An RNA of 177 nucleotides, treated with 2A3 and DMS and read out base by base. Conditions: 150 mM KOAc, 10 mM MgCl2 and 150 mM bicine (pH 8.5), 24 C. For DMS the reverse transcriptase was MarathonRT. Values cover nucleotides 27 to 126.
RNA sequence: GGGAACGACUCGAGUAGAGUCGAAAAAAAAAAUUAAUUCGCGUUGGCUCUUGUGGCGCGAUGCAAGAAAACAUUGAUUUAUAUGAUGUGAUUAUUGCACAAGGUGCCUCUACUGAUUCAAAUUACGCGAAGGAUACGUUUUCGAACGUAUCCUUCGAAAAGAAACAACAACAACAAC
Reactivity to 2A3 in 0.01 (KOAc 150mM, MgCl2 10mM, bicine 150mM(pH8.5), 24C), signal-to-noise 2, nucleotides 027 to 126: a020a000a000a000a000a000u060u060a000a050u070u010c050g000c020g030u010u040g030g000c010u010c000u050u120g040u080g050g000c020g000c070g040a020u000g000c010a000a000g010a030a000a020a020c020a020u040u050g020a120u080u300u190a200u100a090u300g040a000u010g020u020g070a000u220u000a020u000u010g070c020a050c000a010a040g110g010u020g060c020c010u030c000u160a240c090u050g040a040u020u150c080a030a110a240u170u080a060c100g000
Reactivity to DMS in 0.01 (KOAc 150mM, MgCl2 10mM, bicine 150mM(pH8.5), 24C), signal-to-noise 2, nucleotides 027 to 126: a000a010a010a010a010a030u050u060a050a040u020u000c020g000c050g030u000u000g000g010c030u010c050u000u000g010u010g020g000c010g010c010g000a090u000g000c000a010a000g000a220a140a060a000c020a000u010u000g020a280u010u020u030a180u030a080u080g000a000u000g000u000g000a020u040u000a070u000u000g020c000a000c150a050a040g000g010u000g000c010c010u010c000u000a070c060u050g010a110u010u000c050a040a110a130u000u020a110c080g020